[RMDB]
RNA sequence: GGGAACGACUCGAGUAGAGUCGAAAAAAGCUCUAUCAGAUCAUCUUGUACCAACGUGAACAAGAUUCAUGCGGAGGCUUCGAGUUGACCGGCUUUGGGAGAUGAAGCAAUAGAAGCUUCAAGUUGAAGCCCAUAGUUGUUUCGACAACUAUGGGCUAAAAGAAACAACAACAACAAC
Reactivity to DMS in 0.01 (KOAc 150mM, MgCl2 10mM, bicine 150mM(pH8.5), 24C), signal-to-noise 1, nucleotides 027 to 126: a070a040g000c010u000c030u000a030u000c070a260g000a100u020c090a020u030c010u010u000g000u000a070c070c020a010a150c160g090u020g010a070a060c000a060a050g010a300u000u010c050a010u000g030c200g000g010a300g010g000c010u000u000c020g000a040g000u020u000g000a090c120c130g000g000c120u000u000u000g020g000g000a030g000a070u000g020a020a020g040c010a090a070u000a110g000a080a060g030c000u000u000c060a100a130g000u010u000g000a090
Source: RMDB library OK2TST, as collected in RNAgym. The record gives the reactivity of an RNA of 177 nucleotides to DMS. For DMS the reverse transcriptase was MarathonRT. Values cover nucleotides 27 to 126.